Chemical mapping of a 207-nucleotide RNA with 2A3. 2A3 adducts were read by reverse transcription with SuperScript II with manganese. Values cover nucleotides 27 to 156. For 2A3, 1,556 sequencing reads were counted. Source: RMDB library RNAMAK, as collected in RNAgym.
RNA sequence: GGGAACGACUCGAGUAGAGUCGAAAAGGGGUCGGUCCACGCGGCUCGUCGUGGAGCUUGGAUUUAUGACGCUGAAGCCUCCACGGCGUCAUUGUCAGCUCCACACGAGCCCAUGGACCGACGGAGGCACCCAAAGGGUUAGCUUCGGCUAACCCAACUCUCCUCAACGAUUCGUCGUUGAGGAGAGAAAAGAAACAACAACAACAAC
Reactivity to 2A3 in 0.01 (KOAc 150mM, MgCl2 10mM, bicine 150mM(pH8.5), 24C), signal-to-noise 2, nucleotides 027 to 156: g060g040g030g000u010c000g000g020u000c010c030a050c060g130c240g040g000c020u030c050g030u100c190g000u010g000g000a000g000c000u110u200g170g000a040u220u300u060a000u040g010a000c000g000c000u010g040a160a010g070c030c040u070c010c000a020c030g010g000c000g010u000c000a000u010u020g010u000c000a010g020c000u020c020c000a000c000a000c030g000a000g010c000c000c000a000u000g000g000a000c030c000g000a000c000g000g000a000g030g030c050a040c010c000c000a070a080a060g000g000g000u000u000a000g000c020u060u110c290g000g020c000u000a010a000c000c000c000a000a010